[RMDB]
Chemical mapping of a 177-nucleotide RNA with 2A3 and DMS.
For 2A3 the reverse transcriptase was SuperScript II with manganese.
Source: RMDB library OK2TST, as collected in RNAgym.
The RNA was probed in 150 mM KOAc, 10 mM MgCl2 and 150 mM bicine (pH 8.5) at 24 C.
For DMS, 27,750 sequencing reads were counted.
RNA sequence: GGGAACGACUCGAGUAGAGUCGAAAAGGAAGAAGCUCUCGGGCACCGCGGAGCGCCCGCGGCUGGUGGUGCAUCGGUCCGCGCGGCACAUCCACGUGCAACUGGUGAACGACCUCAACGGCACCACUAUUUAUUACGUAUUCGUACGUAAUAAAUAAAAAGAAACAACAACAACAAC
Reactivity to 2A3 in 0.01 (KOAc 150mM, MgCl2 10mM, bicine 150mM(pH8.5), 24C), signal-to-noise 6, nucleotides 027 to 126: g060g020a050a100g030a060a020g030c010u000c010u030c040g010g040g000c030a010c030c040g010c050g020g010a040g030c030g020c000c000c000g000c000g010g000c010u020g000g020u030g030g240u160g060c020a020u040c020g010g040u040c020c010g020c010g000c090g030g000c020a010c010a160u020c030c010a030c050g000u040g010c040a090a090c060u080g010g040u060g040a110a050c020g040a080c010c020u060c040a080a050c040g040g000c010a010c020c000a010c010
Reactivity to DMS in 0.01 (KOAc 150mM, MgCl2 10mM, bicine 150mM(pH8.5), 24C), signal-to-noise 9, nucleotides 027 to 126: g010g010a090a100g010a100a130g010c030u000c030u000c050g010g000g020c020a050c070c070g020c060g010g000a080g020c100g000c020c000c010g010c130g010g010c070u000g010g030u000g010g020u000g020c030a050u000c030g010g000u010c030c040g010c020g010c160g010g010c030a030c060a110u000c040c040a060c060g010u000g010c040a110a080c080u010g000g010u000g000a070a100c060g000a120c030c020u000c100a060a120c100g000g010c030a050c020c020a070c160